About this RNA: Structure probing data (2A3 and DMS) for a 177-nucleotide construct. The data come from the RNA Mapping Database (RMDB), library OK1LIB. Conditions: 150 mM KOAc, 10 mM MgCl2 and 150 mM bicine (pH 8.5), 24 C. For 2A3, 436 sequencing reads were counted. For 2A3 the reverse transcriptase was SuperScript II with manganese.
RNA sequence: GGGAACGACUCGAGUAGAGUCGAAAAAAGACUAAGGCAAUUCUUGAUGAACGUGUUCAACGUUUAGAGUUACUUUUGAAUCAGUUGAAUGGAGUCAGAGGCAUUGAUGACUAUGAGUCACUCGUAAUGUGUGGAAGAACUUCGGUUCUUCCACACAAAAAGAAACAACAACAACAAC
Reactivity to 2A3 in 0.01 (KOAc 150mM, MgCl2 10mM, bicine 150mM(pH8.5), 24C), signal-to-noise 2, nucleotides 027 to 126: a020a000g040a000c000u000a040a030g170g000c020a010a000u000u000c000u050u020g000a030u060g000a140a020c040g100u190g050u170u070c040a000a000c000g030u000u000u040a060g030a000g000u150u270a230c040u060u120u000u040g090a090a080u000c140a060g000u040u000g050a000a000u020g000g000a000g090u040c010a060g050a070g040g000c040a000u050u050g050a090u050g000a000c030u270a300u260g000a000g010u040c000a000c060u000c000g180u100a200a000
Reactivity to DMS in 0.01 (KOAc 150mM, MgCl2 10mM, bicine 150mM(pH8.5), 24C), signal-to-noise 2, nucleotides 027 to 126: a020a080g020a190c010u000a120a040g000g000c010a030a040u010u020c010u000u000g000a090u030g020a030a010c070g050u020g000u020u010c100a080a050c040g000u060u000u000a050g060a050g030u010u010a050c060u070u000u000u030g000a050a030u000c100a080g000u020u000g000a000a000u020g020g000a160g010u030c010a050g000a130g000g000c110a040u030u030g080a060u010g000a130c100u010a080u080g040a160g000u000c010a050c100u050c010g010u010a010a090